[RMDB]
RNA sequence: GGGAACGACUCGAGUAGAGUCGAAAAUGAUAUAAUCUGCAUCCGACAACGAUCACCAACUUCCACCUUGAUCGAUUGGUCGCAUAAUCCAUUAAAUUUGGAAGUAGUCGCUCAUGCUUAGAACUACCCCACUGCGUAAUUUCGAUUACGCAGUGGGAAAAGAAACAACAACAACAAC
Reactivity to 2A3 in 0.01 (KOAc 150mM, MgCl2 10mM, bicine 150mM(pH8.5), 24C), signal-to-noise 3, nucleotides 027 to 126: u120g100a010u020a030u040a170a130u080c070u050g000c010a010u050c030c000g080a030c050a090a000c050g060a060u060c030a000c030c030a060a010c000u040u030c030c000a070c000c020u010u080g040a040u040c020g090a090u050u040g090g050u130c040g050c020a030u070a070a030u010c000c030a000u070u050a210a040a140u080u060u010g030g000a010a040g010u030a010g030u030c020g000c010u010c080a030u070g010c000u060u080a050g020a110a020c010u110a070c030
Reactivity to DMS in 0.01 (KOAc 150mM, MgCl2 10mM, bicine 150mM(pH8.5), 24C), signal-to-noise 1, nucleotides 027 to 126: u060g000a110u030a110u030a050a070u000c000u000g010c000a080u000c100c040g000a150c030a120a200c000g000a080u000c000a020c090c020a190a040c040u000u000c000c120a100c090c070u010u070g000a020u000c070g000a100u000u000g000g020u000c130g010c120a010u080a170a050u000c020c050a000u000u000a090a050a060u030u000u040g000g000a080a030g000u000a090g000u000c090g000c000u000c160a110u000g080c020u000u000a020g000a000a070c160u000a010c210
Structure probing data (2A3 and DMS) for a 177-nucleotide construct. For DMS the reverse transcriptase was MarathonRT. 2A3 adducts were read by reverse transcription with SuperScript II with manganese. Source: RMDB library OK1LIB, as collected in RNAgym. For DMS, 1,132 sequencing reads were counted. Conditions: 150 mM KOAc, 10 mM MgCl2 and 150 mM bicine (pH 8.5), 24 C.